RNA sequence: GGGAACGACUCGAGUAGAGUCGAAAAGGGGUCAUCCGUUUGACGCUCGAGACAUGCUGGAUACACUGAAGCCUCCACGGUGUAUUAGCAACAGCUCGAGCCGAGGAUGACGGAGGCACCCAAAACAAAUCAGCGUGCUUCGGCACGCUGAUUUGAAUCAAGUCAACAGGUUCGCCUGUUGACUUGAAAAAGAAACAACAACAACAAC
Reactivity to 2A3 in 0.01 (KOAc 150mM, MgCl2 10mM, bicine 150mM(pH8.5), 24C), signal-to-noise 1, nucleotides 027 to 156: g120g010g010g020u010c000a010u010c000c000g010u140u070u200g020a000c000g000c000u000c000g000a020g030a070c180a210u300g000c020u050g120g020a010u020a010c000a010c020u000g070a120a020g020c010c010u000c010c020a020c010g000g010u030g010u010a010u010u010a020g000c060a110a210c050a170g010c000u010c000g000a000g000c020c010g000a000g010g000a000u010g000a010c020g000g010a000g010g060c000a030c010c010c020a050a120a010a060c010a000a000a000u000c010a000g010c000g010u010g000c000u090u040c150g130g000c000a000c000g000c000u000g000a000u000u000u000g000a000a000

An RNA of 207 nucleotides, treated with 2A3 and read out base by base. 2A3 adducts were read by reverse transcription with SuperScript II with manganese. For 2A3, 1,002 sequencing reads were counted. Values cover nucleotides 27 to 156.